[RMDB]
RNA sequence: GGGAACGACUCGAGUAGAGUCGAAAAGCAGCCUGGUGGUGUCCAGGAUCGACACCUGUUGGUGGAGACGGUUGGGUCAUCCGUUUCUGCCACUGACACAGUGGGCAAAAGCCAAACCGCCCGUAUGCGAUGAGGGUCUCAAUGCAGCAAACAGCAACAUGAGGACGUAGUUCGCUACGUCCUCAUGAAAAGAAACAACAACAACAAC
Reactivity to 2A3 in 0.01 (KOAc 150mM, MgCl2 10mM, bicine 150mM(pH8.5), 24C), signal-to-noise 1, nucleotides 027 to 156: g060c060a040g060c060c040u040g050g020u130g060g090u020g010u000c030c030a120g110g020a120u100c170g000a000c000a000c020c010u030g070u100u040g160g030u110g000g000a000g010a000c000g000g000u000u110g190g030g020u080c040a130u200c000c000g000u000u000u000c000u020g000c000c010a080c080u070g110a060c050a000c000a110g120u140g000g030g000c030a110a160a000a000g080c050c000a000a000a040c100c090g040c000c000c000g080u110a100u120g010c000g010a000u090g060a060g090g120g030u030c000u000c000a040a100u100g000c060a010g000c020a000a000a170c070a060g150c020a040a070
An RNA of 207 nucleotides, treated with 2A3 and read out base by base. 2A3 adducts were read by reverse transcription with SuperScript II with manganese. The 2A3 profile rests on 440 reads. The reactions ran in a buffer of 150 mM KOAc, 10 mM MgCl2 and 150 mM bicine (pH 8.5), at 24 C.